[RMDB]
An RNA of 207 nucleotides, treated with 2A3 and read out base by base. The data come from the RNA Mapping Database (RMDB), library OK3TST.

RNA sequence: GGGAACGACUCGAGUAGAGUCGAAAAGAUGGGGCAGGUGGGAAUAUACCUCGCCAACCACUUGCUCCUGAUUGAGAGAUAGACGGCGAGGGUCCGAUCAUACGAUAUAUUCCUGCUCAGCGUAUGAUCGGUUAUGAUACUUAAGAUGAGCAGGUUAAUAUUAUACGGCGUUCGCGCCGUAUAAUAUAAAAGAAACAACAACAACAAC
Reactivity to 2A3 in 0.01 (KOAc 150mM, MgCl2 10mM, bicine 150mM(pH8.5), 24C), signal-to-noise 2, nucleotides 027 to 156: g080a020u130g010g000g000g000c000a000g050g000u000g000g020g050a130a020u130a040u020a070c000c000u000c020g000c000c000a000a030c020c000a010c000u000u000g000c000u030c000c000u030g040a040u100u090g100a070g020a020g010a000u070a080g060a040c140g020g000c010g000a000g000g000g000u040c000c000g010a000u010c000a000u000a000c020g000a040u040a000u010a050u300u110c000c000u000g000c010u000c000a000g030c000g010u000a000u000g000a000u000c000g000g000u000u000a000u010g000a000u050a110c080u180u140a150a120g030a210u050g010a000g000c000a000g000g000u000u010a000